[RMDB]
RNA sequence: GGGAACGACUCGAGUAGAGUCGAAAAUUUUGUGGCUAGCACUCGACAUGUGACCUGUGUUCGGUAAUCACAUCACAGUCAGAGUUCUAGCUACACGGCAAGUUUUAGGCGAUUCGUCGCCUAAAACGAUAUGCAGAUGGUUCGCCAUCUGCAUAUCAAAAGAAACAACAACAACAAC
Reactivity to DMS in 0.01 (KOAc 150mM, MgCl2 10mM, bicine 150mM(pH8.5), 24C), signal-to-noise 9, nucleotides 027 to 126: u010u010u000u000g020u000g000g010c000u000a010g000c080a010c000u000c000g000a010c020a140u000g020u000g000a010c190c240u000g010u000g010u000u010c200g020g010u010a110a090u010c000a000c000a040u000c000a010c010a020g000u000c010a150g010a020g010u000u000c000u000a000g010c000u000a000c000a030c300g010g000c170a070a130g010u000u000u000u000a000g000g010c000g010a020u000u010c210g010u000c000g010c000c000u000a000a000a000a010c020
Reactivity to 2A3 in 0.01 (KOAc 150mM, MgCl2 10mM, bicine 150mM(pH8.5), 24C), signal-to-noise 9, nucleotides 027 to 126: u110u110u050u080g010u010g000g000c000u000a000g010c020a000c000u000c000g020a020c150a300u020g010u000g010a030c040c110u060g010u010g030u060u140c130g140g150u190a120a080u090c010a000c000a000u030c000a010c000a010g010u020c080a070g000a000g000u000u010c000u000a000g000c000u000a000c000a000c000g110g020c120a130a090g000u000u010u010u000a000g000g000c010g000a000u020u060c200g060u010c000g070c000c000u000a000a000a000a000c000